RNA sequence: GGGAACGACUCGAGUAGAGUCGAAAAAAACUUGUCCUUGAGCCCUCAAAUCCCUAUCUUGGUCCCUGCCGGGGCAACUCGGCUAUGUCGGUAGACUGUCGCGUGGAAUAAACACUUCGGACCCGGGCGCUCCUCUUAAGUUCGCUUAAGAGGAGCGAAAAGAAACAACAACAACAAC
Reactivity to DMS in 0.01 (KOAc 150mM, MgCl2 10mM, bicine 150mM(pH8.5), 24C), signal-to-noise 1, nucleotides 027 to 126: a070a110a050c060u000u000g000u000c060c010u000u050g000a060g000c050c030c010u010c080a030a060a060u030c000c000c000u020a050u000c060u040u000g000g010u000c010c000c020u030g020c000c000g000g000g000g020c300a050a040c030u000c020g000g000c000u030a030u010g000u010c030g000g050u030a050g010a030c070u000g000u000c100g020c110g000u040g020g010a040a060u080a110a030a110c160a080c030u000u050c060g010g000a080c000c000c060g020g000g000
Reactivity to 2A3 in 0.01 (KOAc 150mM, MgCl2 10mM, bicine 150mM(pH8.5), 24C), signal-to-noise 2, nucleotides 027 to 126: a000a020a000c120u070u060g040u080c000c010u010u030g040a020g010c000c010c000u020c000a030a080a100u060c000c010c000u040a100u080c030u030u080g070g060u090c020c010c010u030g020c010c020g030g000g000g000c000a000a020c030u030c010g010g000c000u030a040u070g070u000c050g000g070u040a030g030a080c020u030g010u120c000g010c030g090u020g010g050a050a040u080a120a080a020c030a010c060u040u050c010g060g000a040c020c010c000g000g010g000